[RMDB]
RNA sequence: GGGAACGACUCGAGUAGAGUCGAAAAAAGGUGCGGUAGUGUAUGGCUGAGCUCGUGUUUGCUCAUCGCCGGGUUAGGGUAUACGCUAUCGACCCGGGUGCGUUGAGCGAGGCCGCUAGAGACGGGGGCGCACUACCGUGUUCGCACGGUAGUGCGCAAAAGAAACAACAACAACAAC
Reactivity to 2A3 in 0.01 (KOAc 150mM, MgCl2 10mM, bicine 150mM(pH8.5), 24C), signal-to-noise 1, nucleotides 027 to 126: a000a000g100g000u090g000c010g010g000u110a010g060u030g020u010a140u150g050g040c090u090g030a010g040c000u000c020g060u060g080u130u040u050g050c040u020c000a150u010c040g030c080c010g020g000g000u060u080a170g100g000g030u020a130u000a050c130g000c030u030a030u090c050g000a000c000c000c000g000g000g090u300g050c070g040u100u070g000a020g000c000g000a030g090g000c010c030g000c020u030a000g000a000g010a020c000g000g040g020g060